[RMDB]
RNA sequence: GGGAACGACUCGAGUAGAGUCGAAAACAUCUUUCCUCCCUACACAGUGACUCCAGCUUGGGAGGGCCAGGGCUAGGCUGAGCCAGCACUCCCUGUGGUGUCUGCCUGCCACGUGCAGCUCUGGAGUAAAACCUGGAGAAGUUCGCUUCUCCAGGAACUUUAGAUUACUCUUCGGAGUAAUCUAAAGAAAAGAAACAACAACAACAAC
Reactivity to DMS in 0.01 (KOAc 150mM, MgCl2 10mM, bicine 150mM(pH8.5), 24C), signal-to-noise 2, nucleotides 027 to 156: c080a110u000c050u000u000u010c030c010u010c010c000c040u000a110c110a180c130a190g010u020g010a090c030u010c020c030a200g020c080u000u020g010g020g020a050g000g010g030c040c030a020g000g040g020c020u000a070g020g030c010u000g000a210g030c030c020a070g020c020a050c040u000c010c040c010u000g050u010g010g010u010g000u000c030u010g050c030c020u000g000c000c000a130c130g020u010g030c020a050g010c000u000c050u050g000g010a170g020u000a060a030a100a140c020c000u000g000g000a030g010a010a020g040u000u000c300g010c000u000u000c000u000c000c000a000g020g000a010a010
Reactivity to 2A3 in 0.01 (KOAc 150mM, MgCl2 10mM, bicine 150mM(pH8.5), 24C), signal-to-noise 2, nucleotides 027 to 156: c010a110u090c080u100u150u040c010c010u040c000c000c000u100a070c170a010c040a130g100u070g070a040c030u030c020c010a040g020c020u070u050g000g000g000a000g000g000g000c010c010a020g010g020g020c020u160a030g040g000c020u040g030a020g090c050c010a010g020c010a010c040u070c020c030c040u090g040u130g030g010u040g090u030c020u030g000c010c000u030g010c020c000a090c090g140u210g030c030a030g020c000u020c020u040g010g000a010g000u010a010a050a000a020c000c000u000g010g000a000g000a000a000g000u030u090c150g010c100u000u000c000u000c000c000a000g000g000a000a000